Source information
An RNA of 170 nucleotides, treated with DMS and 2A3 and read out base by base. As a SHAPE reagent, 2A3 marks flexible, mostly unpaired nucleotides at the ribose 2'-OH. The DMS profile rests on 7,528 reads. DMS adducts were read by reverse transcription with MarathonRT. Values cover nucleotides 27 to 129. For 2A3, 2,820 sequencing reads were counted.
RNA sequence: GGGAACGACUCGAGUAGAGUCGAAAAACUUGUUGUACUACAAGGGACAGAUUUUAUCGCUUGGCAAAUGAGUGUGCUCAGGUGCUAAGCGAAUAUGUUCUAUGUGGUGGUGGUUACUACGUCAAACAAAUCUUACCCUUCGGGGUAAGAAAAAGAAACAACAACAACAAC
Reactivity to DMS in 0.01 (KOAc 150mM, MgCl2 10mM, bicine 150mM(pH8.5), 24C), signal-to-noise 3, nucleotides 027 to 129: a190c130u030u020g000u010u000g030u060a080c030u000a040c120a030a300g030g000g000a060c040a060g030a220u070u000u020u050a070u030c020g040c000u000u060g000g070c050a030a050a060u020g010a030g040u070g010u080g060c000u000c000a120g010g040u000g040c040u030a010a060g010c000g030a050a000u010a080u020g030u030u000c000u000a000u030g100u030g020g070u080g020g060u050g030g020u080u030a130c100u000a050c000g010u040c230a070a070a150c180a050a060a110
Reactivity to 2A3 in 0.01 (KOAc 150mM, MgCl2 10mM, bicine 150mM(pH8.5), 24C), signal-to-noise 2, nucleotides 027 to 129: a010c030u020u060g000u030u030g020u120a000c020u000a000c010a080a260g010g000g000a000c030a010g080a110u000u030u030u060a110u100c070g000c000u000u060g020g000c000a000a010a030u000g020a000g040u300g040u300g180c000u000c000a010g000g020u010g000c000u000a000a020g000c000g000a000a000u000a030u010g000u000u000c020u030a050u120g050u000g000g040u010g040g010u070g050g010u080u060a080c050u030a040c040g080u060c030a120a090a040c030a030a100a020